[RMDB]
RNA sequence: GGGAACGACUCGAGUAGAGUCGAAAACCAUGAAUUCUGCUUAGUCAGAAAGGACGAGACGGUGCCUGGUUCGAAUCCCGGAGUCGCGACCCGGGCGUGGUCUUAUUUAAUGGACCGCGUCUCUUCUGGUUCUCCCACACUCGUGCGAGCAAUCCACCAGCUUACCCUAGUUCGCUAGGGUAAGCUGAAAAGAAACAACAACAACAAC
Reactivity to 2A3 in 0.01 (KOAc 150mM, MgCl2 10mM, bicine 150mM(pH8.5), 24C), signal-to-noise 1, nucleotides 027 to 156: c000c000a010u090g080a070a270u110u040c010u010g100c080u240u240a040g140u300c000a020g030a070a050a010g030g000a030c080g010a010g020a060c010g040g030u110g040c030c030u010g020g020u100u110c060g060a060a030u010c010c030c000g040g040a040g000u020c040g000c000g040a100c000c000c000g050g020g000c010g010u010g000g000u000c010u000u180a220u270u300u300a090a130u180g000g000a040c030c030g030c000g020u010c000u000c000u070u010c010u010g000g000u090u020c010u010c120c050c000a000c000a000c040u240c000g010u010g000c040g020a030g000c050a030a060u030c000c000a030c010